[RMDB]
An RNA of 177 nucleotides, treated with 2A3 and DMS and read out base by base.
The data come from the RNA Mapping Database (RMDB), library M2PK50.
RNA sequence: GGGAACGACUCGAGUAGAGUCGAAAAAUAAGUCCUUUCGAGGACUUAUAAUGCUGCCCAAAGAGGACCUGGGCGUGUCUGGGCUGCUAAACUCAUCAGCCGUGGCUUUGGGGUUCGCCCCAAAGAAUACAUGCACCAUGUUCGCAUGGUGCAUGUAAAAAGAAACAACAACAACAAC
Reactivity to 2A3 in 0.01 (KOAc 150mM, MgCl2 10mM, bicine 150mM(pH8.5), 24C), signal-to-noise 1, nucleotides 027 to 126: a020u010a010a000g000u000c010c000u060u000u080c180g130a030g000g010a000c000u000u010a000u010a000a020u080g070c050u090g010c000c000c020a060a110a030g210a030g040g000a020c040c050u080g060g000g090c030g000u040g040u020c090u040g040g040g020c020u010g010c000u080a150a170a060c060u080c100a120u020c050a030g070c000c000g070u050g090g000c010u010u010u010g000g000g020g040u000u040c200g120c000c000c040c000a000a020a000g000a010a010
Reactivity to DMS in 0.01 (KOAc 150mM, MgCl2 10mM, bicine 150mM(pH8.5), 24C), signal-to-noise 2, nucleotides 027 to 126: a020u000a010a000g000u000c000c000u000u000u010c130g010a000g010g020a030c000u000u000a020u010a040a050u000g030c090u000g020c000c000c000a030a140a080g020a090g010g000a070c070c000u000g000g000g010c060g000u000g000u010c060u000g000g010g030c020u000g010c150u020a060a080a100c110u010c070a070u010c020a030g030c030c010g000u000g010g010c010u000u000u000g000g010g010g010u000u010c240g020c010c000c000c010a010a000a000g000a120a130
Description: The RNA was probed in 150 mM KOAc, 10 mM MgCl2 and 150 mM bicine (pH 8.5) at 24 C. DMS (dimethyl sulfate) methylates the pairing face of unpaired adenines and cytosines. For DMS the reverse transcriptase was MarathonRT. Reactivities are rounded to 0.1 and cut off at 0 and 3.